[RMDB]
RNA sequence: GGGAACGACUCGAGUAGAGUCGAAAAACAGAUUUACAUUGCCGACUAUGGUCUGUGCAAGGUGGUGGGUCAAGAGUCGUGUCUCGACGGCACGCUCGACUAUUACUCGCCCGAAAAAUUAGCGGGACGACGAUACGACUACCAUUUUGAUUGGUGGAUAUAGUGACCUCUUCGGAGGUCACUAUAUAAAAGAAACAACAACAACAAC
Reactivity to 2A3 in 0.01 (KOAc 150mM, MgCl2 10mM, bicine 150mM(pH8.5), 24C), signal-to-noise 2, nucleotides 027 to 156: a000c010a000g080a060u110u120u190a070c040a040u180u170g030c000c000g150a090c080u080a120u200g090g020u010c000u000g030u040g020c030a030a030g010g000u000g020g020u050g000g100g000u090c010a070a070g020a000g090u300c030g010u000g060u000c030u030c180g160a120c130g000g000c000a000c000g000c000u010c000g030a000c000u010a040u230u110a040c010u000c010g000c000c000c000g090a110a000a050a010a070u240u160a060g140c020g000g010g020a150c020g000a020c010g050a030u000a090c020g000a020c080u000a010c000c000a000u000u030u000u030g150a120u070u160g030g020u080g030g070
Reactivity to DMS in 0.01 (KOAc 150mM, MgCl2 10mM, bicine 150mM(pH8.5), 24C), signal-to-noise 1, nucleotides 027 to 156: a050c060a070g000a070u010u020u010a110c090a090u010u020g020c020c020g030a110c090u000a060u000g000g010u010c020u040g000u000g010c010a020a020g000g030u000g000g010u010g020g020g010u010c090a050a150g000a000g020u000c030g090u000g000u000c010u000c150g020a160c250g010g010c020a030c010g020c020u000c000g020a110c060u000a090u000u000a060c050u000c010g080c040c020c010g000a010a040a070a110a200u010u000a140g000c020g050g020g020a100c050g020a040c030g010a130u010a060c020g000a100c020u000a080c010c010a090u000u020u000u010g030a100u010u000g020g010u000g010g020
Annotation
The data come from the RNA Mapping Database (RMDB), library OK3TST. An RNA of 207 nucleotides, treated with 2A3 and DMS and read out base by base. 2A3 adducts were read by reverse transcription with SuperScript II with manganese.